Structure probing data (DMS and 2A3) for a 207-nucleotide construct. DMS adducts were read by reverse transcription with MarathonRT. The reactions ran in a buffer of 150 mM KOAc, 10 mM MgCl2 and 150 mM bicine (pH 8.5), at 24 C. Values are in units of 0.01, from 0 to 300, in steps of 10.
RNA sequence: GGGAACGACUCGAGUAGAGUCGAAAAGCGUAGGCGAGAGGGCCGGGUUGCUCUGGAGUAGAGGCUUCUUGCUUCGAAACAUCAUCGAUCGUCCCUUCUUCUUUUACCUUCUCCUGGCUCUUCCGAUGAGACGCGACCGGUGGCAUCACCUCUCGGUGAAAGGAUAUUGGUUCGCCAAUAUCCUUUCAAAAGAAACAACAACAACAAC
Reactivity to DMS in 0.01 (KOAc 150mM, MgCl2 10mM, bicine 150mM(pH8.5), 24C), signal-to-noise 1, nucleotides 027 to 156: g060c060g020u010a070g000g020c060g020a090g020a060g040g020g000c060c070g030g010g010u000u000g020c030u000c060u020g020g040a230g040u010a220g000a040g000g000c020u010u000c180u000u000g000c000u030u000c020g000a300a190a230c030a160u040c040a060u000c000g020a120u000c040g030u000c020c010c010u000u020c060u010u000c070u000u020u010u000a070c030c040u010u010c020u000c040c040u040g000g000c020u010c010u000u000c000c060g020a200u000g010a160g010a100c070g020c000g000a080c020c000g000g000u010g010g060c030a180u010c040a050c020c010u000c000u010c020g000g030u010
Reactivity to 2A3 in 0.01 (KOAc 150mM, MgCl2 10mM, bicine 150mM(pH8.5), 24C), signal-to-noise 4, nucleotides 027 to 156: g070c050g050u070a040g070g080c030g000a020g010a010g040g020g000c000c030g010g030g020u080u070g000c020u010c050u040g000g000a010g000u000a010g000a000g000g020c010u190u060c140u250u300g010c000u000u010c010g010a010a010a010c020a010u290c000a010u020c000g070a090u040c000g050u020c000c000c000u050u040c050u080u020c020u030u130u050u110a090c020c020u070u060c050u040c040c030u070g050g010c010u020c000u110u020c060c020g020a050u050g010a050g020a080c050g010c010g020a020c010c020g070g050u010g040g000c060a090u080c020a100c010c000u010c000u030c010g010g010u040